Source information:
The record gives the reactivity of an RNA of 177 nucleotides to DMS. It was measured as part of the RMDB library OK2TRN. For DMS, 652 sequencing reads were counted. The RNA was probed in 150 mM KOAc, 10 mM MgCl2 and 150 mM bicine (pH 8.5) at 24 C.

[RMDB]
RNA sequence: GGGAACGACUCGAGUAGAGUCGAAAAGUGCAUCGUUCGGGAAAAACCCCAGGUCCAAAACUGUCAAGCGUCCUCUCUCCGGGACAUCUAGAGGCGGCGGUAUCCAUGCCUCAACCAGACGAGCCUGCGGUAUUGUCGGAUUCGUCCGACAAUACCGAAAAGAAACAACAACAACAAC
Reactivity to DMS in 0.01 (KOAc 150mM, MgCl2 10mM, bicine 150mM(pH8.5), 24C), signal-to-noise 1, nucleotides 027 to 126: g030u010g000c010a090u000c060g030u000u000c140g030g010g000a050a070a120a120a150c060c010c030c050a020g040g000u000c050c060a090a040a030a130c170u000g010u000c150a140a100g010c240g000u010c000c020u000c040u040c050u030c060c050g000g030g000a030c080a080u010c100u000a110g010a010g010g010c000g020g020c130g020g030u020a020u000c000c000a090u000g000c000c010u000c060a090a050c080c040a160g030a030c130g010a070g010c000c030u010g020